[RMDB]
The record gives the reactivity of an RNA of 207 nucleotides to DMS and 2A3.
DMS adducts were read by reverse transcription with MarathonRT.
The reactions ran in a buffer of 150 mM KOAc, 10 mM MgCl2 and 150 mM bicine (pH 8.5), at 24 C.
RNA sequence: GGGAACGACUCGAGUAGAGUCGAAAACCAGGACAUGUGCGCCACGCCGAGGUCGUCCAUCACGGUGUGGUCCUCACGCGCGGGGCGGAAGACAUGGGUCUCAAUCUGGUUGACCAUCGGCGUGACAUCAGAGAACGCCGCGAUAUCGAGCAUGCGAGAUUAUGCGCUCAUUCGUGAGCGCAUAAUCAAAAGAAACAACAACAACAAC
Reactivity to DMS in 0.01 (KOAc 150mM, MgCl2 10mM, bicine 150mM(pH8.5), 24C), signal-to-noise 1, nucleotides 027 to 156: c030c030a170g030g000a100c030a030u000g040u000g000c030g000c010c020a010c000g000c010c020g030a080g030g010u000c000g010u020c080c000a100u000c010a140c140g050g030u010g010u000g040g020u000c010c030u000c070a000c110g000c190g010c030g030g030g000g170c080g000g020a110a040g040a110c000a090u010g020g000g000u010c060u000c120a160a190u010c030u000g010g010u000u000g000a110c040c050a160u000c010g000g010c010g000u000g000a120c030a230u010c070a130g010a120g030a300a050c010g000c000c000g000c000g050a140u000a080u010c090g000a010g030c020a050u000g020c030g010a300
Reactivity to 2A3 in 0.01 (KOAc 150mM, MgCl2 10mM, bicine 150mM(pH8.5), 24C), signal-to-noise 2, nucleotides 027 to 156: c000c020a020g000g110a050c010a010u070g040u050g010c030g000c010c000a000c000g010c000c000g000a020g010g010u090c070g080u010c040c000a130u150c040a060c140g020g070u050g020u030g100g000u020c000c000u070c000a080c020g080c020g020c010g010g000g040g000c090g040g080a030a040g010a010c020a030u110g030g100g070u000c010u000c100a110a120u100c040u050g000g000u010u060g070a030c040c000a120u090c010g000g000c000g010u020g080a010c010a020u110c090a040g060a020g000a170a010c010g010c000c040g010c010g030a000u060a090u160c070g010a000g030c020a090u030g090c080g070a110